[RMDB]
RNA sequence: GGGAACGACUCGAGUAGAGUCGAAAACUCCGUACAAGUUCACGUACCUGGCGCUGCAGCGGCACAUCCGGGGCGAGUAACUGCGCCUGCGCGAGCAGGUGGGGGCGUGGCCCUGCGGGGCGUGGCCGUGACCCCUAAAUUUCGAUUUAGGGGUCACAAAAGAAACAACAACAACAAC
Reactivity to 2A3 in 0.01 (KOAc 150mM, MgCl2 10mM, bicine 150mM(pH8.5), 24C), signal-to-noise 3, nucleotides 027 to 126: c010u000c000c000g030u060a040c060a160a060g020u030u070c020a000c030g070u160a300c020c010u050g040g000c060g030c060u100g000c040a130g090c030g190g040c050a030c000a100u130c030c000g010g000g010g030c020g040a040g030u080a060a070c030u040g050c020g010c000c000u010g000c020g020c040g020a020g000c000a010g010g000u020g020g030g010g010g010c080g070u100g070g000c010c000c010u020g020c060g020g020g010g000c030g020u070g040g020c010c030
Reactivity to DMS in 0.01 (KOAc 150mM, MgCl2 10mM, bicine 150mM(pH8.5), 24C), signal-to-noise 3, nucleotides 027 to 126: c040u000c030c070g010u010a070c090a110a060g000u000u000c080a150c040g010u000a060c030c010u010g020g010c190g000c050u010g000c060a150g020c100g000g000c050a090c110a110u010c050c030g020g000g010g010c040g010a080g010u010a070a070c050u000g000c010g020c000c000u010g020c000g020c300g000a200g000c000a010g010g030u010g000g010g010g000g000c060g050u010g020g010c000c000c000u000g020c050g020g000g010g000c030g030u000g010g000c060c050

The record gives the reactivity of an RNA of 177 nucleotides to 2A3 and DMS. DMS adducts were read by reverse transcription with MarathonRT. The reactions ran in a buffer of 150 mM KOAc, 10 mM MgCl2 and 150 mM bicine (pH 8.5), at 24 C. The data come from the RNA Mapping Database (RMDB), library OK2TST.